[RMDB]
RNA sequence: GGGAACGACUCGAGUAGAGUCGAAAAAGAAAGGCUGAAGUCUGACAGUGGAUGGCCAGGAUUUGUAAAAGAUCACAAAGGUCAAAAUAAGACUUUACAUAUGCAAGCAUUCAGAGGCAGCAUAAUCGCAUUAGUCAUAAUUCGUUAUGACUAAUGCAAAAGAAACAACAACAACAAC
Reactivity to DMS in 0.01 (KOAc 150mM, MgCl2 10mM, bicine 150mM(pH8.5), 24C), signal-to-noise 9, nucleotides 027 to 126: a080g010a090a100a070g010g010c060u010g010a050a040g010u000c010u000g010a110c160a090g020u000g000g020a180u000g000g010c010c020a140g000g000a040u000u000u000g000u010a080a080a110a050g010a030u000c020a080c140a070a080a130g000g010u010c020a030a040a090a080u010a100a050g000a040c020u000u000u010a050c100a120u010a040u000g000c030a070a080g010c030a070u000u010c130a070g010a120g010g010c020a130g010c050a040u010a050a100u010c170
Reactivity to 2A3 in 0.01 (KOAc 150mM, MgCl2 10mM, bicine 150mM(pH8.5), 24C), signal-to-noise 7, nucleotides 027 to 126: a000g100a030a030a000g070g010c040u020g020a030a010g030u010c010u010g020a030c020a040g050u080g110g110a120u090g020g010c000c000a010g040g000a030u030u020u040g020u040a110a140a100a020g030a030u040c030a030c070a270a130a060g000g000u010c000a050a050a030a060u110a070a020g000a000c000u030u040u040a060c050a040u080a010u080g010c040a040a150g000c010a040u060u120c030a040g050a080g200g020c010a000g000c020a040u100a080a080u220c100

Chemical mapping of a 177-nucleotide RNA with DMS and 2A3. The reactions ran in a buffer of 150 mM KOAc, 10 mM MgCl2 and 150 mM bicine (pH 8.5), at 24 C. Reactivities are given for positions 27 through 126.